Chemical mapping of a 177-nucleotide RNA with 2A3 and DMS.
RNA sequence: GGGAACGACUCGAGUAGAGUCGAAAAGCACUAAUGGUCAUGCUGUACCGACUCUCUUUAGACUUAAGGGAGGUGCACCUGUAAAAAAAGUAGCCUUUGGCGGUGAUCAAGUACAUGAGGUUGCUGCGAAUAUUCUAGUCUUCGGACUAGAAUAUUCAAAAGAAACAACAACAACAAC
Reactivity to 2A3 in 0.01 (KOAc 150mM, MgCl2 10mM, bicine 150mM(pH8.5), 24C), signal-to-noise 4, nucleotides 027 to 126: g000c000a010c040u140a120a110u180g040g010u030c020a040u140g120c090u060g040u100a030c010c000g080a060c000u000c000u000c000u050u060u070a160g100a290c060u100u070a040a010g020g000g000a020g030g000u010g000c010a030c000c020u060g100u170a070a050a020a010a020a020a010g040u010a010g010c010c010u050u040u080g060g010c040g000g060u040g020a060u100c040a030a060g030u050a120c020a080u090g020a030g030g020u020u030g020c000u050g010c040
Reactivity to DMS in 0.01 (KOAc 150mM, MgCl2 10mM, bicine 150mM(pH8.5), 24C), signal-to-noise 5, nucleotides 027 to 126: g010c030a020c040u020a090a110u010g000g010u000c050a110u010g010c110u010g010u020a080c080c020g000a300c050u000c000u000c010u000u000u000a110g020a110c210u010u000a020a020g010g000g010a030g010g010u000g000c040a110c020c020u010g010u010a000a000a060a050a070a070a050g020u000a040g010c020c040u000u000u000g010g020c030g020g020u010g000a070u010c120a060a080g000u000a050c080a050u000g010a050g000g000u010u000g000c020u000g010c210

For DMS, 5,281 sequencing reads were counted.
For 2A3, 3,950 sequencing reads were counted.
The reactions ran in a buffer of 150 mM KOAc, 10 mM MgCl2 and 150 mM bicine (pH 8.5), at 24 C.
It was measured as part of the RMDB library 15KREP.